RNA sequence: GGGAACGACUCGAGUAGAGUCGAAAAGAGUCAUACAACCCCAGAAACCAUUCAUUAUACCUUGAGUAUUGCUGAAUUCAGUUUAGCGUGCAUGCUCUUGGCUAUUCUCAUAGUGAUUGUCAAAUUUAAAACGACGAUGACUUCGGUCAUCGUCGAAGAGAAGUUGUAACUUCGGUUACAACUUCUCAAAAGAAACAACAACAACAAC
Reactivity to 2A3 in 0.01 (KOAc 150mM, MgCl2 10mM, bicine 150mM(pH8.5), 24C), signal-to-noise 3, nucleotides 027 to 156: g030a010g040u120c050a030u080a230c020a090a160c030c000c000c000a030g100a060a100a030c060c010a020u020u040c010a010u060u100a060u030a060c000c000u010u030g000a010g020u030a080u220u130g010c020u050g060a190a140u200u200c040a120g090u030u110u170a050g010c040g010u020g060c000a010u020g000c000u000c000u000u000g010g010c010u100a080u180u060c120u020c050a060u050a050g020u030g020a070u050u030g060u080c070a090a060a090u110u260u200a080a220a060a030c030g000a000c020g000a000u000g000a000c000u010u020c170g020g010u000c010a000u000c010g030u000c000g000a000a000
Reactivity to DMS in 0.01 (KOAc 150mM, MgCl2 10mM, bicine 150mM(pH8.5), 24C), signal-to-noise 1, nucleotides 027 to 156: g030a040g000u000c030a060u000a150c050a020a150c020c000c020c060a250g020a170a100a100c040c020a080u000u000c030a050u000u000a080u030a040c000c010u030u000g000a090g040u020a040u000u000g050c040u000g010a060a060u000u010c120a080g010u000u000u010a060g020c000g050u000g000c070a130u000g030c010u010c010u000u000g000g020c080u000a070u000u000c110u000c110a080u010a080g000u030g000a150u040u010g000u000c040a070a110a130u010u000u010a060a090a190a180c020g000a040c000g000a000u000g000a050c000u000u000c300g030g000u000c020a000u010c000g000u000c000g030a010a040
The data come from the RNA Mapping Database (RMDB), library M2RFPK. The record gives the reactivity of an RNA of 207 nucleotides to 2A3 and DMS. Conditions: 150 mM KOAc, 10 mM MgCl2 and 150 mM bicine (pH 8.5), 24 C.